RNA sequence: GGGAACGACUCGAGUAGAGUCGAAAACUACCAAGCAUCAAGAUCUCUGUACUUAUUUGUGUUGCACCAUUGAGAAAGCUAAGGCACGGAUAAAUGAGGAGCAUGCCCUAACUCUCAUUAACCAUGGGCACCUUGCAAUAUUCGUAUUGCAAGGUGCAAAAGAAACAACAACAACAAC
Reactivity to DMS in 0.01 (KOAc 150mM, MgCl2 10mM, bicine 150mM(pH8.5), 24C), signal-to-noise 2, nucleotides 027 to 126: c090u000a120c090c020a080a050g050c060a080u000c060a100a070g000a120u010c030u010c050u000g000u010a060c080u020u000a110u000u000u020g000u010g000u010u000g010c070a060c090c030a050u010u020g010a100g010a070a070a050g000c070u040a050a110g000g010c020a030c040g010g000a090u010a040a050a070u030g030a150g010g000a060g020c110a060u000g000c010c000c040u000a080a080c040u000c050u000c030a030u000u000a060a100c090c070a090u010g010g010
Reactivity to 2A3 in 0.01 (KOAc 150mM, MgCl2 10mM, bicine 150mM(pH8.5), 24C), signal-to-noise 2, nucleotides 027 to 126: c040u090a080c000c000a060a000g080c020a040u090c040a080a020g050a110u050c040u040c040u090g050u070a040c020u100u080a090u070u170u070g100u020g050u070u070g020c040a050c040c050a060u020u180g030a080g080a160a080a000g010c010u030a020a060g050g000c010a000c040g040g000a000u050a100a070a070u080g060a050g020g030a010g000c020a020u080g000c000c000c000u060a070a050c010u000c020u000c030a020u030u090a050a020c030c010a030u040g000g070